[RMDB]
RNA sequence: GGGAACGACUCGAGUAGAGUCGAAAAGAUAUGGAUUUAUCGGCUAAGUGUAUUUGGCAGAGUUCGCUAUCGGAAACGAUAGAUGAACGACGAAGCCAAAUACACUUAGCCGAGUAAAUCCUAAGUCGGUGAACAAUAAGUUCGCUUAUUGUUCACCAAAAGAAACAACAACAACAAC
Reactivity to DMS in 0.01 (KOAc 150mM, MgCl2 10mM, bicine 150mM(pH8.5), 24C), signal-to-noise 3, nucleotides 027 to 126: g010a110u010a300u010g010g000a010u000u000u000a060u000c000g010g000c010u010a000a000g010u010g010u000a010u000u000u000g010g060c000a050g000a240g010u000u000c000g000c000u000a000u000c000g020g000a130a140a240c010g000a020u000a000g000a060u000g010a000a020c000g010a160c260g020a130a130g010c000c000a000a020a000u010a000c000a000c000u000u000a000g000c000c010g020a000g010u010a000a000a000u000c000c020u000a040a100g020u000c140